[RMDB]
RNA sequence: GGGAACGACUCGAGUAGAGUCGAAAACUCUGGAAGACAGGUGCUUUACCAAGACCUCUGGCACCAGUGUCUGCUCCUCUGAUCUGAUAAGUGUGGCGCCAUCAGUGCAGAGGACAAAGGUCAAGUGCUCGUCCCAAGAAUUCGUUCUUGGGACGAGAAAAGAAACAACAACAACAAC
Reactivity to DMS in 0.01 (KOAc 150mM, MgCl2 10mM, bicine 150mM(pH8.5), 24C), signal-to-noise 1, nucleotides 027 to 126: c040u010c010u010g030g010a170a000g020a050c020a090g020g020u000g000c030u020u000u000a150c070c120a150a120g020a040c020c020u000c110u020g010g010c010a010c020c030a090g000u020g000u000c020u000g000c130u000c050c010u010c030u000g010a120u010c010u000g070a050u000a070a090g020u000g030u000g020g000c070g020c100c080a030u000c040a010g020u010g020c060a000g010a030g030g000a030c220a040a050a090g000g040u000c010a120a120g030u010g000
Reactivity to 2A3 in 0.01 (KOAc 150mM, MgCl2 10mM, bicine 150mM(pH8.5), 24C), signal-to-noise 1, nucleotides 027 to 126: c030u060c090u070g090g060a120a000g010a030c030a060g050g000u030g040c020u110u140u160a160c070c040a060a060g030a000c020c060u110c020u030g030g000c030a020c020c030a070g050u020g010u090c060u040g020c070u000c010c000u020c010u000g090a080u090c000u030g000a000u020a120a080g100u030g060u080g220g050c030g020c000c020a040u000c030a000g030u030g160c010a000g020a030g040g000a000c000a010a090a010g000g000u050c020a040a010g050u070g120